Source: RMDB library OK2TRN, as collected in RNAgym.
The record gives the reactivity of an RNA of 177 nucleotides to DMS and 2A3.
The DMS profile rests on 1,026 reads.
The 2A3 profile rests on 1,316 reads.
DMS adducts were read by reverse transcription with MarathonRT.
The reactions ran in a buffer of 150 mM KOAc, 10 mM MgCl2 and 150 mM bicine (pH 8.5), at 24 C.
RNA sequence: GGGAACGACUCGAGUAGAGUCGAAAAGUACUUAGAUGAACAAACUUCAGAUAUAUUACAAGAUGGCGAUGACUGGGAUGUCAGCCAACAGGCGCCAAAAGCAACCGACCAAAUUGACUCAGCAACCGCUUUAAUGCGUAUUCGUACGCAUUAAAGCAAAAGAAACAACAACAACAAC
Reactivity to DMS in 0.01 (KOAc 150mM, MgCl2 10mM, bicine 150mM(pH8.5), 24C), signal-to-noise 2, nucleotides 027 to 126: g000u000a080c100u000u010a060g000a150u000g000a080a040c130a080a080a090c130u000u000c010a030g030a160u000a060u000a040u010u000a100c060a090a070g020a130u000g010g010c020g000a050u000g010a030c040u000g010g020g000a090u000g010u010c020a020g020c020c020a040a070c150a130g000g020c020g030c030c010a010a060a100a120g000c060a080a070c030c040g010a130c040c050a030a030a090u030u000g000a070c030u000c030a070g010c080a070a100c110c110
Reactivity to 2A3 in 0.01 (KOAc 150mM, MgCl2 10mM, bicine 150mM(pH8.5), 24C), signal-to-noise 2, nucleotides 027 to 126: g000u010a020c040u060u060a020g050a130u090g010a090a020c050a050a140a040c070u060u060c010a010g030a050u040a000u030a060u190u090a070c060a120a040g040a220u040g040g010c000g080a050u030g040a110c040u040g010g090g000a050u070g040u080c020a000g010c010c000a040a040c040a020g040g000c040g020c000c040a050a090a000a060g060c040a060a050c020c020g030a030c010c010a000a030a130u000u080g030a050c000u010c060a030g030c000a040a070c000c050